[RMDB]
RNA sequence: GGGAACGACUCGAGUAGAGUCGAAAAUAGAUUUUAUUCAGGAACAACAGGCUGAAUUACUGGAGCGCCAGAUUAACGCGGCAAGGGUAAAACAUUGCGGUGCUUCUGCGCUGGUUUGCGAAGAGUGUGACGCGCCAAUACCUGCUGCCCGUCGUGCCGUGAAUAGGUCAUUCGUGACCUAUUCACGAAAAGAAACAACAACAACAAC
Reactivity to 2A3 in 0.01 (KOAc 150mM, MgCl2 10mM, bicine 150mM(pH8.5), 24C), signal-to-noise 4, nucleotides 027 to 156: u130a020g070a060u050u090u060u100a060u030u080c020a020g040g020a170a090c040a100a020c020a100g150g000c020u030g030a070a060u100u040a120c040u040g040g020a040g070c080g050c020c030a020g030a060u080u160a080a030c030g030c050g070g000c030a070a130g050g000g010u050a010a050a100a010c070a100u060u170g000c020g090g000u010g030c000u030u000c030u090g000c000g000c010u040g050g120u140u210u140g000c040g030a060a010g050a060g070u070g020u060g070a030c020g010c000g000c090c000a040a030u040a040c000c010u040g060c070u050g010c030c000c040g030u070c010g000u030g020c010
Reactivity to DMS in 0.01 (KOAc 150mM, MgCl2 10mM, bicine 150mM(pH8.5), 24C), signal-to-noise 2, nucleotides 027 to 156: u010a090g010a100u000u000u000u000a070u040u000c020a170g030g030a070a080c040a030a030c020a050g030g020c050u000g010a120a100u000u000a060c050u000g020g020a080g040c030g050c030c010a120g000a150u000u000a030a140c030g000c030g020g000c010a030a070g020g000g030u000a070a030a110a110c040a110u000u010g040c070g020g020u000g000c020u000u000c040u000g010c000g060c030u020g030g040u000u000u000g040c030g010a040a080g000a060g040u010g050u010g010a000c010g030c000g000c060c040a020a160u000a010c030c010u000g000c040u000g020c010c010c040g020u000c020g000u010g040c050
Chemical mapping of a 207-nucleotide RNA with 2A3 and DMS. The reactions ran in a buffer of 150 mM KOAc, 10 mM MgCl2 and 150 mM bicine (pH 8.5), at 24 C. The DMS profile rests on 4,006 reads.